[RMDB]
RNA sequence: GGGAACGACUCGAGUAGAGUCGAAAACUGCUGCACAAGGAUCAGCUGGAUGAGACUGUCAAUGUGGAGCCUCUCACCAAGGCCAUCAAGUACUAUCAGGUGUGGGGCAAGAAUUUGGGCUUGGGGAUGACCUGAUUUACUUCGGUAAAUCAGGUCAAAAAGAAACAACAACAACAAC
Reactivity to 2A3 in 0.01 (KOAc 150mM, MgCl2 10mM, bicine 150mM(pH8.5), 24C), signal-to-noise 1, nucleotides 027 to 126: c010u010g020c000u060g070c010a030c010a090a190g090g000a090u140c010a010g030c020u070g050g070a090u020g040a010g020a120c000u030g020u070c050a020a140u050g020u040g090g040a000g000c050c000u020c000u000c000a060c010c000a000a040g030g030c010c000a090u220c040a040a030g010u060a070c090u040a060u210c100a030g010g030u030g040u040g030g000g020g000c010a010a000g030a010a010u100u140u120g020g020g030c090u120u130g000g010g050g060a040
Reactivity to DMS in 0.01 (KOAc 150mM, MgCl2 10mM, bicine 150mM(pH8.5), 24C), signal-to-noise 2, nucleotides 027 to 126: c040u000g000c050u000g010c030a080c040a070a080g000g010a090u000c040a070g020c050u010g000g000a080u000g010a090g000a040c040u010g030u000c090a060a070u000g000u010g020g000a080g020c010c060u000c020u000c020a020c060c060a140a070g020g000c040c040a080u000c100a040a060g020u000a080c100u000a150u000c150a150g000g020u020g000u000g000g030g060g040c050a010a060g000a030a050u000u010u000g000g020g020c030u000u010g020g020g020g010a170
Structure probing data (2A3 and DMS) for a 177-nucleotide construct. Conditions: 150 mM KOAc, 10 mM MgCl2 and 150 mM bicine (pH 8.5), 24 C. Source: RMDB library OK2TST, as collected in RNAgym. The 2A3 profile rests on 700 reads.